The record gives the reactivity of an RNA of 207 nucleotides to DMS and 2A3.
Values cover nucleotides 27 to 156.
The 2A3 profile rests on 1,667 reads.

RNA sequence: GGGAACGACUCGAGUAGAGUCGAAAACCCCUGUUUCGACAGGGGAAAAACCGUAGGAUCGAUGAUGAACUACGCUCAGAGGGACCUUCGAAAGAGGGUCCCAAGUUGAGCGCAUCCGCUCGAUCCUAAACGGAAAAAACAAGGUUUCGACCUUGAAUAUCUGAAAAGGUUUCGACCUUUUCAGAUAAAAAGAAACAACAACAACAAC
Reactivity to DMS in 0.01 (KOAc 150mM, MgCl2 10mM, bicine 150mM(pH8.5), 24C), signal-to-noise 1, nucleotides 027 to 156: c000c000c000c000u000g010u000u000u030c140g030a120c000a070g020g000g030g000a010a010a020a110a060c000c010g020u010a020g020g010a010u000c010g030a070u010g010a150u000g010a070a130c030u000a010c040g030c000u000c000a040g040a300g020g010g000a010c020c000u000u000c020g010a080a110a300g000a050g010g000g020u000c000c000c000a010a000g030u000u010g010a040g010c010g010c010a270u000c020c030g060c060u000c010g000a010u000c000c000u000a000a030a070c000g000g000a010a030a150a080a100a120c020a000a030g010g000u000u000u020c220g000a120c020c000u000u000g010a190a180
Reactivity to 2A3 in 0.01 (KOAc 150mM, MgCl2 10mM, bicine 150mM(pH8.5), 24C), signal-to-noise 2, nucleotides 027 to 156: c020c000c000c000u000g060u060u150u080c220g130a020c020a010g020g000g010g060a090a020a000a000a040c010c000g010u020a020g000g000a000u000c000g000a010u070g010a000u020g050a150a160c060u150a060c240g000c000u000c020a010g030a140g000g000g000a000c010c000u000u000c000g090a160a080a050g000a000g010g000g000u040c010c010c000a000a010g000u010u020g000a000g000c030g000c000a000u000c020c000g000c000u000c000g000a000u000c000c000u000a010a000a000c000g020g000a090a040a010a010a000a010c020a020a000g040g010u070u180u110c180g160a110c000c000u000u000g010a000a020

The RNA was probed in 150 mM KOAc, 10 mM MgCl2 and 150 mM bicine (pH 8.5) at 24 C.